The record gives the reactivity of an RNA of 207 nucleotides to DMS and 2A3. In probing experiments dimethyl sulfate is read out at A N1 and C N3, which are open when not base-paired. For 2A3 the reverse transcriptase was SuperScript II with manganese. Reactivities are given for positions 27 through 156. The RNA was probed in 150 mM KOAc, 10 mM MgCl2 and 150 mM bicine (pH 8.5) at 24 C.
[RMDB]
RNA sequence: GGGAACGACUCGAGUAGAGUCGAAAAGCUCUGGAAUUGAGGCCCCUCUAACAAUAAUCCAAAACUACUUCGCAGAGUAAUGUGCCGAAUCGUAGGAUGCCCAUUACUAUCUAUUUUUGGAGCAUCUAAAACUGUCAGUGCUUCGGCACUGACAGAACUAUGUUACUGCGUUCGCGCAGUAACAUAGAAAAGAAACAACAACAACAAC
Reactivity to DMS in 0.01 (KOAc 150mM, MgCl2 10mM, bicine 150mM(pH8.5), 24C), signal-to-noise 1, nucleotides 027 to 156: g000c020u010c030u040g010g050a080a070u020u010g000a070g030g000c000c000c010c000u000c090u010a200a110c060a160a140u000a110a110u030c060c040a010a070a090a090c010u010a040c040u000u000c100g000c110a020g010a070g020u000a040a090u010g040u000g000c090c030g020a080a120u010c080g050u000a210g030g030a090u000g000c000c020c000a060u000u010a100c030u020a110u000c090u010a110u000u010u000u000u010g010g020a150g060c020a030u010c020u010a030a040a100a110c000u000g010u000c010a010g020u010g000c000u000u010c300g010g060c010a020c030u010g000a000c020a000g030a040a150
Reactivity to 2A3 in 0.01 (KOAc 150mM, MgCl2 10mM, bicine 150mM(pH8.5), 24C), signal-to-noise 3, nucleotides 027 to 156: g000c000u000c010u020g070g120a240a150u070u110g020a050g020g050c000c010c000c010u070c060u080a080a050c030a090a140u170a040a040u060c030c020a030a060a040a050c020u110a060c040u060u060c050g020c120a010g010a010g100u060a050a100u070g020u030g090c050c050g070a050a080u120c050g040u060a040g000g080a010u020g000c010c000c000a010u030u030a030c050u040a080u100c040u060a180u040u070u000u000u010g040g000a110g010c010a020u000c000u070a040a030a010a070c000u020g000u000c000a000g000u000g010c000u010u040c110g060g000c000a000c000u000g010a000c000a000g000a000a010